An RNA of 177 nucleotides, treated with DMS and 2A3 and read out base by base. Values are in units of 0.01, from 0 to 300, in steps of 10. The RNA was probed in 150 mM KOAc, 10 mM MgCl2 and 150 mM bicine (pH 8.5) at 24 C. 2A3 adducts were read by reverse transcription with SuperScript II with manganese. DMS adducts were read by reverse transcription with MarathonRT. For 2A3, 3,277 sequencing reads were counted.
[RMDB]
RNA sequence: GGGAACGACUCGAGUAGAGUCGAAAAGAUAUGGAGAUGUCAGUGCAGAGGACACAAUCGGAAACGAUUGAGUCCGACGAAGCACUGAGCAUCUCCUAAGUCAAACGGGGAUCUUCGGAUCCCCGAACCUCAAGGUUAGGUUCGCCUAACCUUGAGGAAAAGAAACAACAACAACAAC
Reactivity to DMS in 0.01 (KOAc 150mM, MgCl2 10mM, bicine 150mM(pH8.5), 24C), signal-to-noise 2, nucleotides 027 to 126: g000a030u000a300u010g000g000a010g020a000u000g010u000c000a010g000u000g070c020a140g000a220g030g000a010c010a120c030a010a000u000c000g050g010a070a070a170c010g030a000u000u010g000a080g000u000c000c000g000a050c300g030a100a120g000c000a000c000u010g020a060g030c000a020u000c020u000c000c000u010a020a060g000u000c020a070a150a300c020g000g000g010g020a000u000c000u000u020c190g040g000a030u000c000c010c020c000g000a000a030
Reactivity to 2A3 in 0.01 (KOAc 150mM, MgCl2 10mM, bicine 150mM(pH8.5), 24C), signal-to-noise 2, nucleotides 027 to 126: g000a000u040a010u090g010g000a000g000a000u000g050u090c010a000g010u000g000c040a010g040a080g300g000a000c010a030c020a070a000u010c000g030g010a020a080a000c020g000a000u000u000g010a040g000u000c020c000g060a040c040g240a260a090g010c000a000c000u010g040a000g010c000a000u000c000u000c000c000u010a000a000g030u050c030a000a060a160c030g000g000g000g030a010u000c010u070u280c300g120g030a000u000c000c000c000c000g000a000a010